[RMDB]
The record gives the reactivity of an RNA of 177 nucleotides to 2A3 and DMS.

RNA sequence: GGGAACGACUCGAGUAGAGUCGAAAAAAGGACUGGUUCGCCAGUCCUUAUUCAUUCGUACGCAACGAAGCGUAAGUCAUUACGCAUAUGACUAAAAGCGUAUACGAAAGGACUUCGGUCCUUUCAACCGUUGAUUCAUGUUCGCAUGAAUCAACGGAAAAGAAACAACAACAACAAC
Reactivity to 2A3 in 0.01 (KOAc 150mM, MgCl2 10mM, bicine 150mM(pH8.5), 24C), signal-to-noise 2, nucleotides 027 to 126: a000a000g000g000a010c040u010g000g070u040u020c100g040c080c000a000g000u010c000c000u000u000a010u000u030c000a010u000u000c040g000u030a000c020g000c030a080a040c080g090a100a050g000c010g030u010a000a030g080u140c110a160u020u040a010c010g000c030a010u040a060u280g190a130c090u150a090a070a000a010g020c010g010u010a030u010a040c090g000a000a000a010g020g000a000c000u010u020c210g040g000u000c000c000u000u020u010c000a000a010
Reactivity to DMS in 0.01 (KOAc 150mM, MgCl2 10mM, bicine 150mM(pH8.5), 24C), signal-to-noise 2, nucleotides 027 to 126: a030a000g010g000a000c000u010g000g020u000u020c260g030c000c040a020g000u000c000c000u000u000a000u000u010c130a170u000u000c060g000u000a000c050g000c000a070a110c090g010a110a150g010c000g020u010a020a020g010u040c300a030u000u000a010c050g010c070a070u000a080u030g010a190c160u000a070a040a100a050g000c000g000u000a030u000a060c210g000a010a000a000g030g000a010c000u000u060c140g020g000u000c000c000u000u000u000c000a140a130